An RNA of 177 nucleotides, treated with 2A3 and DMS and read out base by base. Values cover nucleotides 27 to 126. 2A3 adducts were read by reverse transcription with SuperScript II with manganese. The DMS profile rests on 11,454 reads. The data come from the RNA Mapping Database (RMDB), library OK1LIB. Conditions: 150 mM KOAc, 10 mM MgCl2 and 150 mM bicine (pH 8.5), 24 C.
RNA sequence: GGGAACGACUCGAGUAGAGUCGAAAACUGGGGAUCAGAGAGGAUCCAAAGAGGUUCUGGAAGGUUCAUGUGGAAUGUAGCAAGAGAUAGGAGACAUGGACAUGGUGCCGGGUCUGGUUGCCAAGAAGCGUGGUCCAGAGUUCGCUCUGGACUACGCAAAAGAAACAACAACAACAAC
Reactivity to 2A3 in 0.01 (KOAc 150mM, MgCl2 10mM, bicine 150mM(pH8.5), 24C), signal-to-noise 6, nucleotides 027 to 126: c030u020g030g000g010g030a030u060c020a000g120a030g030a050g180g030a030u020c020c000a020a060a020g100a060g010g000u070u060c030u080g060g070a120a070g080g010u010u010c020a020u060g000u030g090g090a090a050u100g020u130a040g110c080a140a000g010a030g010a160u090a110g070g060a050g010a030c020a020u060g020g000a010c010a040u090g030g000u070g050c010c000g040g000g050u020c030u010g040g000u040u050g060c030c000a040a020g060a100a010
Reactivity to DMS in 0.01 (KOAc 150mM, MgCl2 10mM, bicine 150mM(pH8.5), 24C), signal-to-noise 5, nucleotides 027 to 126: c040u030g010g020g010g000a040u010c030a090g000a140g010a140g000g010a040u000c020c020a050a130a070g010a110g000g030u010u020c020u000g010g010a210a110g030g000u010u010c060a020u030g010u000g000g020a160a060u020g020u000a050g020c090a080a070g000a100g040a050u010a080g020g000a300g010a050c040a020u000g000g010a030c040a040u020g000g020u010g000c030c000g010g000g010u000c020u000g000g000u000u010g000c020c010a040a130g020a070a110